Description: An RNA of 207 nucleotides, treated with 2A3 and DMS and read out base by base. The reactions ran in a buffer of 150 mM KOAc, 10 mM MgCl2 and 150 mM bicine (pH 8.5), at 24 C. For DMS, 1,750 sequencing reads were counted. Source: RMDB library M2RFPK, as collected in RNAgym.
[RMDB]
RNA sequence: GGGAACGACUCGAGUAGAGUCGAAAAGAUUCCUCGUUGUUGAGCGAGGUUUAAACAAAUCGACCACACAAACGUAGAGCCGACUACGGAUUUAUAAAUUAAGGCAUUAAGGGUGAUAAGGAGACAAAAAACGAUGUUGUGUUCGCACAACAUCGAACCAAUAUCGCAUGUUCGCAUGCGAUAUUGGAAAAGAAACAACAACAACAAC
Reactivity to 2A3 in 0.01 (KOAc 150mM, MgCl2 10mM, bicine 150mM(pH8.5), 24C), signal-to-noise 3, nucleotides 027 to 156: g080a200u120u070c000c010u000c000g000u000u100g020u010u010g010a010g000c000g010a000g040g030u040u150u000a010a010a000c050a010a020a010u010c010g020a000c030c000a050c000a020c020a100a190a030c000g010u020a010g000a010g050c040c020g150a040c020u010a000c000g030g000a020u010u300u030a130u060a120a040a020u170u090a010a010g000g000c000a000u070u140a050a040g040g000g000u040g000a040u020a060a050g090g000a040g050a070c090a020a060a000a040a020a010c020g020a000u000g000u030u000g010u000g020u080u120c130g030c060a000c000a000a000c000a000u000c000g000a010a000
Reactivity to DMS in 0.01 (KOAc 150mM, MgCl2 10mM, bicine 150mM(pH8.5), 24C), signal-to-noise 1, nucleotides 027 to 156: g000a300u000u000c000c000u010c080g020u000u000g030u020u000g020a200g040c010g050a040g000g000u020u030u010a100a010a140c070a030a030a110u000c120g000a080c050c030a110c130a300c090a100a190a080c030g020u000a030g020a040g020c000c060g000a160c030u000a100c010g080g010a150u020u010u000a070u000a030a040a120u000u000a040a050g000g040c020a170u000u010a100a090g010g000g010u000g000a060u000a060a100g000g000a200g000a030c080a000a060a020a060a050a240c010g000a000u010g020u000u000g030u010g000u000u000c270g000c040a010c000a000a000c000a010u000c000g000a000a060
Reactivities are rounded to 0.1 and cut off at 0 and 3. Values cover nucleotides 27 to 156.